Structure probing data (DMS) for a 177-nucleotide construct.
For DMS the reverse transcriptase was MarathonRT.
The DMS profile rests on 1,637 reads.
The RNA was probed in 150 mM KOAc, 10 mM MgCl2 and 150 mM bicine (pH 8.5) at 24 C.
RNA sequence: GGGAACGACUCGAGUAGAGUCGAAAAGAUAUGGAUCGUAGUGGCGAGAUGCACCUCGGAAACGAGGUGGCAUCGAUGAGCCACAGGCGAUCCUAAGUCAAAAGUUGUGGUCUUCGGACCACAACAACAACACGUGACCGUUCGCGGUCACGUGUUGAAAAGAAACAACAACAACAAC
Reactivity to DMS in 0.01 (KOAc 150mM, MgCl2 10mM, bicine 150mM(pH8.5), 24C), signal-to-noise 1, nucleotides 027 to 126: g000a010u000a040u000g000g020a030u000c000g000u010a030g110u000g020g000c000g010a030g000a000u020g000c000a080c010c000u000c000g020g010a020a000a030c020g050a010g010g000u000g010g010c030a020u000c000g010a130u010g010a190g020c000c000a010c000a010g000g000c000g000a000u000c020c000u000a000a080g010u000c010a130a100a090a140g010u000u010g020u000g020g000u010c000u000u010c300g020g000a010c000c000a010c000a000a010c000a080a190